[RMDB]
Conditions: 150 mM KOAc, 10 mM MgCl2 and 150 mM bicine (pH 8.5), 24 C. An RNA of 177 nucleotides, treated with DMS and 2A3 and read out base by base. It was measured as part of the RMDB library OK2TST. The DMS profile rests on 17,341 reads.
RNA sequence: GGGAACGACUCGAGUAGAGUCGAAAAGACGCCUCGUGGUGGUCGGCAUCGGUAGUGCGGAUGAAUCGGUCGAAGGAGAUGUUCAGCGCCUCCUGCAUGCGCUGAAACACGUCGGAAUUGCGCCGGGAGAUGUUGAGUUAUUCGUAACUCAACAUCUAAAAGAAACAACAACAACAAC
Reactivity to DMS in 0.01 (KOAc 150mM, MgCl2 10mM, bicine 150mM(pH8.5), 24C), signal-to-noise 9, nucleotides 027 to 126: g010a100c140g010c040c010u010c120g010u000g010g040u000g010g020u000c070g010g010c040a040u010c060g010g010u000a060g020u010g010c030g010g010a080u010g010a090a080u010c040g010g000u000c050g010a100a070g010g010a130g010a110u000g010u000u000c010a020g000c000g010c020c080u010c050c070u000g010c100a080u000g000c000g020c010u000g000a020a040a070c070a160c090g000u000c030g000g000a150a120u000u000g010c070g020c020c010g010g010g000
Reactivity to 2A3 in 0.01 (KOAc 150mM, MgCl2 10mM, bicine 150mM(pH8.5), 24C), signal-to-noise 6, nucleotides 027 to 126: g030a010c040g020c030c010u050c060g110u090g060g030u040g020g030u050c030g030g000c010a040u050c040g050g030u060a050g040u050g170c020g040g030a040u050g060a080a080u070c040g030g040u050c050g030a050a020g080g030a080g010a060u060g030u030u010c010a000g000c010g000c010c020u090c010c030u050g030c030a050u090g000c010g000c000u000g000a000a010a000c050a000c020g090u060c020g030g080a050a040u080u090g030c030g020c020c000g010g010g000